An RNA of 177 nucleotides, treated with DMS and read out base by base. It was measured as part of the RMDB library OK2TST. Conditions: 150 mM KOAc, 10 mM MgCl2 and 150 mM bicine (pH 8.5), 24 C. Reactivities are given for positions 27 through 126.

RNA sequence: GGGAACGACUCGAGUAGAGUCGAAAACCACCAGGUUUCUGUUUACAUAGUAGCAGUCUUAGAAUACAUUUCUGCAGACAUUUUAAAGCUGGUUGGGAAUUAUGUAAGAAAUAUACGGCAUUAUGAAUGGUAAUACUCUGUUCGCAGAGUAUUACCAAAAAGAAACAACAACAACAAC
Reactivity to DMS in 0.01 (KOAc 150mM, MgCl2 10mM, bicine 150mM(pH8.5), 24C), signal-to-noise 2, nucleotides 027 to 126: c000c010a140c210c130a130g000g000u000u010u010c000u030g010u020u010u000a100c060a040u020a030g020u000a050g030c040a050g000u010c050u000u010a030g010a140a110u020a100c080a050u000u010u000c010u000g000c070a030g010a110c090a070u000u010u020u010a030a060a150g010c050u000g010g040u000u000g010g000g000a100a040u000u010a060u010g020u010a050a050g000a030a060a110u010a090u000a110c150g010g010c000a040u000u020a060u000g010a150a150